Chemical mapping of a 177-nucleotide RNA with 2A3 and DMS.
For DMS, 3,511 sequencing reads were counted.
The data come from the RNA Mapping Database (RMDB), library OK1LIB.

RNA sequence: GGGAACGACUCGAGUAGAGUCGAAAAGCUCUAGGAGACUAGAGCGAUACGUUAGAGAGCUCGUGGCAUGACUAACGGACAGCCAGGUACGAGGUUGCCAGAGGACAUAGCUAUAGCUAUGUCCAAAGAGCUAUCAUUGGUUCGCCAAUGAUAGCUCAAAAGAAACAACAACAACAAC
Reactivity to 2A3 in 0.01 (KOAc 150mM, MgCl2 10mM, bicine 150mM(pH8.5), 24C), signal-to-noise 1, nucleotides 027 to 126: g020c000u010c000u000a050g010g000a080g010a070c000u000a000g000a020g010c000g000a030u040a060c060g030u080u090a070g060a010g000a010g100c030u040c120g090u100g070g040c040a050u040g010a080c020u060a100a000c030g010g080a020c000a010g070c000c030a040g050g000u090a090c100g020a040g090g010u030u040g030c010c000a010g030a020g080g000a000c000a000u010a000g000c000u090a040u030a300g000c000u000a010u020g000u000c010c010a000a000a000
Reactivity to DMS in 0.01 (KOAc 150mM, MgCl2 10mM, bicine 150mM(pH8.5), 24C), signal-to-noise 2, nucleotides 027 to 126: g010c000u000c000u000a020g020g000a300g000a210c030u010a020g000a020g000c030g010a030u030a060c050g040u010u010a010g000a250g010a110g010c000u000c060g040u030g010g000c030a060u020g020a130c010u000a030a040c030g020g000a090c020a040g000c010c020a060g020g010u020a050c070g020a030g000g010u010u010g000c020c030a060g000a180g000g030a010c000a000u000a000g000c000u000a140u090a120g000c000u000a000u000g000u000c000c000a010a010a060